[RMDB]
RNA sequence: GGGAACGACUCGAGUAGAGUCGAAAAGUGCAGCAGUUCGCUGCUGCACAAAAGGCAUCGUAUCUUUGCUUCGAAGCCAAACUAGAAACUAGAAAGCAGUGAAAAGACACUUCUUCGGAAGUGUCAACUAUUAUUGACAGUUCGCUGUCAAUAAUAGAAAAGAAACAACAACAACAAC
Reactivity to DMS in 0.01 (KOAc 150mM, MgCl2 10mM, bicine 150mM(pH8.5), 24C), signal-to-noise 7, nucleotides 027 to 126: g010u000g010c000a010g010c000a010g020u000u010c240g030c000u000g010c010u000g010c000a000c000a010a020a100a090g000g010c010a110u000c030g020u000a050u010c050u000u010u000g010c020u000u000c010g010a050a060g010c010c010a050a070a180c100u000a090g010a090a050a100c120u000a090g010a060a060a050g010c020a010g010u000g000a120a070a080a090g010a010c000a000c000u000u000c000u000u020c180g030g000a020a010g020u000g000u000c000a010a070
Reactivity to 2A3 in 0.01 (KOAc 150mM, MgCl2 10mM, bicine 150mM(pH8.5), 24C), signal-to-noise 9, nucleotides 027 to 126: g000u000g000c000a000g010c000a000g000u020u100c160g050c130u000g010c000u000g000c000a000c000a000a070a000a000g010g000c010a030u020c030g030u090a040u050c080u070u190u110g020c020u040u020c010g010a030a010g000c010c020a050a020a020c030u040a070g170a110a150a020c020u030a050g160a120a130a010g040c040a020g040u050g160a060a060a050a060g000a000c000a000c000u000u010c000u030u070c200g040g000a000a000g000u000g000u000c000a000a000
Chemical mapping of a 177-nucleotide RNA with DMS and 2A3.
2A3 adducts were read by reverse transcription with SuperScript II with manganese.
The data come from the RNA Mapping Database (RMDB), library M2PK50.
The reactions ran in a buffer of 150 mM KOAc, 10 mM MgCl2 and 150 mM bicine (pH 8.5), at 24 C.